An RNA of 207 nucleotides, treated with 2A3 and DMS and read out base by base. 2A3 adducts were read by reverse transcription with SuperScript II with manganese. Values cover nucleotides 27 to 156. The data come from the RNA Mapping Database (RMDB), library OK3TST.

RNA sequence: GGGAACGACUCGAGUAGAGUCGAAAAGCACUGAGCGCGUUAAGCGGGUCUGCAUCUAACGCUGAUGACAACGUCGAGGAGUUGGGUGAUUCAGCAAACAACGCCGAGGAGGCAACCGAUGACCUGACCGAAUCAGCCGGUCCGCUUACCGCAGCACCGUCUUCUCAAAGUUCGCUUUGAGAAGACGAAAAGAAACAACAACAACAAC
Reactivity to 2A3 in 0.01 (KOAc 150mM, MgCl2 10mM, bicine 150mM(pH8.5), 24C), signal-to-noise 4, nucleotides 027 to 156: g060c040a000c140u180g060a040g050c030g000c000g000u000u020a000a010g000c030g010g000g020u010c030u120g050c030a140u060c090u180a080a050c070g000c070u040g000a020u030g030a080c040a090a070c150g030u060c030g140a060g070g000a050g040u010u060g040g030g010u100g040a070u110u110c050a030g070c040a090a120a100c120a110a040c090g010c020c000g040a080g090g150a020g000g000c010a010a020c040c030g030a060u130g110a200c000c000u030g010a030c010c030g010a030a040u030c000a020g000c020c020g030g000u000c000c000g000c000u000u010a020c030c000g000c050a030g020c010a040c040
Reactivity to DMS in 0.01 (KOAc 150mM, MgCl2 10mM, bicine 150mM(pH8.5), 24C), signal-to-noise 1, nucleotides 027 to 156: g010c080a120c060u000g010a160g030c000g020c070g000u000u000a030a050g050c080g020g030g040u000c040u000g070c000a140u010c140u000a020a060c100g030c000u010g000a240u010g030a250c040a090a040c040g000u010c060g040a190g010g040a180g040u000u000g010g000g040u000g010a080u000u000c000a130g010c080a110a130a060c060a080a060c080g010c010c040g030a160g030g000a120g020g010c000a060a020c070c080g010a020u000g010a170c070c000u000g000a060c030c000g010a100a150u000c040a140g000c020c070g000g000u000c000c020g270c090u000u000a010c010c000g000c010a010g000c030a080c060